[RMDB]
RNA sequence: GGGAACGACUCGAGUAGAGUCGAAAACACUUCUUCAAGUGAUGACGGCCUGCUUCGGAGGAUUUGCUCAUGGAGGAAACGACGUGAGUAAUGCGAUUGCUCCACUUGUUUCGCUUUAUCUGAUUGAGACCCAGUAUUUAUUCGUAAAUACUGGGUCAAAAGAAACAACAACAACAAC
Reactivity to 2A3 in 0.01 (KOAc 150mM, MgCl2 10mM, bicine 150mM(pH8.5), 24C), signal-to-noise 4, nucleotides 027 to 126: c010a000c010u040u060c030u190u160c160a060a020g000u010g060a100u070g010a020c020g010g010c020c000u010g010c000u120u130c060g150g030a040g040g010a050u050u020u060g030c010u010c020a010u030g030g000a060g020g020a030a030a000c000g020a000c010g030u030g010a010g010u020a020a010u100g040c050g160a170u020u100g040c000u000c030c010a050c040u020u060g040u010u030u010c030g010c080u130u110u130a220u120c060u120g140a180u100u080g030a050
Reactivity to DMS in 0.01 (KOAc 150mM, MgCl2 10mM, bicine 150mM(pH8.5), 24C), signal-to-noise 7, nucleotides 027 to 126: c040a050c050u000u000c180u010u010c160a050a060g010u000g020a070u000g010a300c050g000g010c010c020u000g010c030u000u000c060g020g020a080g010g010a120u000u000u010g000c010u000c020a020u000g000g000a270g000g000a070a040a070c000g000a230c060g020u000g000a020g000u000a010a020u000g020c130g000a140u000u000g010c020u000c010c030a130c140u000u010g010u000u000u000c040g000c110u000u010u010a060u020c110u000g000a160u000u010g010a300